[RMDB]
An RNA of 177 nucleotides, treated with DMS and 2A3 and read out base by base. For 2A3 the reverse transcriptase was SuperScript II with manganese. The DMS profile rests on 872 reads. The data come from the RNA Mapping Database (RMDB), library OK2TST.
RNA sequence: GGGAACGACUCGAGUAGAGUCGAAAACAUCGCGUCUCGCUUACCAUCGGUAUCGCCAAACAUACUCAGCAGUUGCUGCUCAAUGUUAUGCAGACGCGCGCAGUAGGCACAGAAGUACAGACCGUGAAGCUGCUGGUAAUUUCGAUUACCAGCAGCUAAAAGAAACAACAACAACAAC
Reactivity to DMS in 0.01 (KOAc 150mM, MgCl2 10mM, bicine 150mM(pH8.5), 24C), signal-to-noise 2, nucleotides 027 to 126: c160a080u000c030g020c060g000u000c010u010c130g010c020u030u000a090c090c050a120u010c090g070g030u010a060u000c100g010c100c200a120a070a130c280a020u000a050c080u020c060a030g020c010a090g070u000u020g020c030u020g030c140u020c200a080a100u000g010u000u000a020u000g000c100a050g000a030c070g010c010g050c080g010c130a050g000u000a010g030g030c010a000c070a130g010a090a070g020u010a120c100a050g000a140c040c080g000u020g000a120
Reactivity to 2A3 in 0.01 (KOAc 150mM, MgCl2 10mM, bicine 150mM(pH8.5), 24C), signal-to-noise 1, nucleotides 027 to 126: c000a120u110c020g010c030g010u000c010u030c070g000c000u110u080a090c040c000a070u040c050g060g030u020a010u060c070g020c110c020a000a050a080c050a000u050a150c060u010c070a010g010c010a080g120u280u280g080c030u000g000c000u050c050a070a070u050g000u110u080a080u180g000c020a010g010a100c010g040c030g000c020g000c030a020g050u080a050g020g020c000a020c050a070g090a080a000g050u120a100c020a000g070a030c000c000g000u010g080a030